The data come from the RNA Mapping Database (RMDB), library OK1LIB. An RNA of 177 nucleotides, treated with 2A3 and read out base by base. The reactions ran in a buffer of 150 mM KOAc, 10 mM MgCl2 and 150 mM bicine (pH 8.5), at 24 C. Reactivities are given for positions 27 through 126.
RNA sequence: GGGAACGACUCGAGUAGAGUCGAAAAGCGACCAACUCGACUGGACGCUGCGCCAGAAGACGAGAUUGGACGAGCUUGGCCAGCGCCUUGCAGUCUUUGCAGAGCGUCUCGGUCUGCACCAUCCCCCCACGAUCGACGCUUUCGAGCGUCGAUCGUGAAAAGAAACAACAACAACAAC
Reactivity to 2A3 in 0.01 (KOAc 150mM, MgCl2 10mM, bicine 150mM(pH8.5), 24C), signal-to-noise 2, nucleotides 027 to 126: g040c000g010a060c000c000a000a000c050u010c040g140a090c040u020g000g030a020c020g110c300u240g000c240g050c020c000a010g040a170a010g150a040c020g050a030g020a150u040u070g020g030a050c060g020a010g030c010u050u040g010g000c000c020a000g000c000g000c000c000u070u070g010c040a030g040u190c070u230u300u110g000c000a030g000a070g000c000g030u000c010u020c040g000g000u000c020u040g000c010a010c000c000a010u000c000c000c020c010c000